[RMDB]
RNA sequence: GGGAACGACUCGAGUAGAGUCGAAAACGCAGUUUGGGCUGCAAUGUCCUAACUGCGGUUGUAUUCAAGAAUUGAUGGGAACCAUUUUUGAUGAAACACAUUUUUACAACCAUGAUGGGCAGAAAGCAAAGUCAGGUAUCUUUAACCCUAACCGUCACAUCAAGGCAAGCUUCGGCUUGCCUUGAUGAAAAGAAACAACAACAACAAC
Reactivity to 2A3 in 0.01 (KOAc 150mM, MgCl2 10mM, bicine 150mM(pH8.5), 24C), signal-to-noise 1, nucleotides 027 to 156: c010g040c000a030g000u000u000u000g000g000g040c000u020g070c100a080a130u220g000u050c010c030u000a000a000c000u000g000c000g030g000u000u000g030u030a200u040u050c070a050a000g030a020a030u130u070g010a050u090g040g000g000a070a050c040c040a150u000u020u020u000u150g080a100u070g000a020a220a000c070a040c000a060u040u030u030u130u150a060c030a050a020c030c000a070u100g030a030u050g120g050g000c000a030g050a070a050a000g010c050a070a000a000g130u050c000a030g090g000u000a080u000c000u000u160u060a040a020c010c000c000u050a070a000c040c040g090u060c010a000